[RMDB]
This 177-nucleotide RNA was probed chemically with 2A3 and DMS. The reactions ran in a buffer of 150 mM KOAc, 10 mM MgCl2 and 150 mM bicine (pH 8.5), at 24 C. It was measured as part of the RMDB libraries RFM100 and RFMREP.

RNA sequence: GGGAACGACUCGAGUAGAGUCGAAAAGAUUUAGACACUCUACGAAAUCGUUGGGCCCUACUGGACAAGCCUUUGGCCAGAAUCCACUUUCAGGGGGUGGAGGGUAGCAUAGGGUAUCACCCAAUUGCGGGUGAUACCAGUUCGCUGGUAUCACCCGAAAAGAAACAACAACAACAAC
Reactivity to 2A3 in 0.01 (KOAc 150mM, MgCl2 10mM, bicine 150mM(pH8.5), 24C), signal-to-noise 6, nucleotides 027 to 126: g100a040u110u090u160a020g010a020c020a010c050u000c010u010a010c030g050a020a060a070u040c030g010u020u040g040g050g020c010c010c020u020a060c060u020g000g040a030c030a070a070g090c040c060u120u070u130g030g010c000c000a020g010a020a030u020c020c000a040c040u080u180u150c120a060g030g060g030g030g000u030g010g030a030g040g030g030u040a050g060c070a050u060a030g010g030g010u050a060u130c060a070c030c000c010a030a070u130u150g050
Reactivity to DMS in 0.01 (KOAc 150mM, MgCl2 10mM, bicine 150mM(pH8.5), 24C), signal-to-noise 5, nucleotides 027 to 126: g010a150u010u010u010a080g000a300c300a050c020u000c000u000a010c020g000a110a090a080u010c040g000u000u000g000g000g000c010c030c010u010a080c060u000g020g000a040c040a030a060g000c120c160u030u010u000g010g010c020c010a080g010a140a100u000c000c020a040c070u000u020u000c180a130g010g010g010g000g020u000g000g010a050g000g000g020u010a070g000c090a080u010a070g000g010g020u010a050u010c070a160c000c000c020a070a130u030u010g000